[RMDB]
Source: RMDB library PDB130, as collected in RNAgym. Chemical mapping of a 207-nucleotide RNA with 2A3. For 2A3, 616 sequencing reads were counted. The RNA was probed in 150 mM KOAc, 10 mM MgCl2 and 150 mM bicine (pH 8.5) at 24 C.
RNA sequence: GGGAACGACUCGAGUAGAGUCGAAAAAAUGAGCUUAUAGGUGUUAUAAAGACUCGCUGGUGUUUGUCUCCUUGAGGCAUACGGCUUAAUCAAAACUCUCAAAGUUUGACCUCAAAUCAGGUAGGAAUACCCGCUGAACUUAAGCAUAUCAAUAAGCCUGUACACAGCUGUUCGCAGCUGUGUACAGAAAAGAAACAACAACAACAAC
Reactivity to 2A3 in 0.01 (KOAc 150mM, MgCl2 10mM, bicine 150mM(pH8.5), 24C), signal-to-noise 2, nucleotides 027 to 156: a000a010u060g000a010g010c000u010u000a000u030a060g000g040u050g020u030u140a190u060a190a210a020g010a160c010u000c030g010c040u000g010g030u030g030u000u030u030g080u040c020u010c000c010u020u000g000a000g000g020c010a020u040a070c030g010g030c040u050u090a080a050u120c060a060a010a090a070c100u140c030u060c160a140a120a000g030u050u090u110g160a240c020c010u080c030a050a070a080u100c070a020g010g010u090a030g030g050a010a000u000a050c000c000c020g010c070u070g030a130a040c010u070u000a010a000g000c000a000u000a000u090c040a110a060u000a010a010g000c000